[RMDB]
RNA sequence: GGGAACGACUCGAGUAGAGUCGAAAAGCUCUCCGCAAGGAGCUAGAGCGAAGACAUGUGUGCCGAAGCCCGAACACUUGUCGAUUAGCAGCUUGACGUCCUGCAGGAGCUACGUCUUGCUGCGAAAGGGAUGCAUGUCCUUCGGGACGUGCAUCCCAAAAGAAACAACAACAACAAC
Reactivity to DMS in 0.01 (KOAc 150mM, MgCl2 10mM, bicine 150mM(pH8.5), 24C), signal-to-noise 2, nucleotides 027 to 126: g000c010u000c000u000c000c060g000c180a150a140g020g000a000g020c120u000a050g000a180g010c000g000a200a170g000a010c000a020u000g000u000g000u000g010c040c010g030a200a130g010c080c060c010g010a060a020c020a010c020u000u000g010u000c000g000a250u000u030a100g000c020a010g000c010u000u000g000a000c000g000u000c220c080u000g000c120a010g010g020a150g000c030u040a010c000g040u010c000u020u010g040c000u000g030c000g000a000a060a080
Reactivity to 2A3 in 0.01 (KOAc 150mM, MgCl2 10mM, bicine 150mM(pH8.5), 24C), signal-to-noise 3, nucleotides 027 to 126: g010c000u000c000u020c050c060g060c120a050a090g050g000a020g020c010u030a020g010a010g050c050g050a140a000g010a010c000a010u030g030u000g000u050g080c070c040g110a110a040g030c010c000c000g010a050a000c010a000c000u030u020g000u010c020g020a040u070u050a020g000c000a000g010c000u000u000g000a000c000g000u060c080c090u040g030c040a060g000g240a160g020c040u020a010c000g000u000c000u000u010g000c000u010g020c020g030a010a000a060

The record gives the reactivity of an RNA of 177 nucleotides to DMS and 2A3. The reactions ran in a buffer of 150 mM KOAc, 10 mM MgCl2 and 150 mM bicine (pH 8.5), at 24 C. It was measured as part of the RMDB library OK1LIB. 2A3 adducts were read by reverse transcription with SuperScript II with manganese. For 2A3, 3,830 sequencing reads were counted.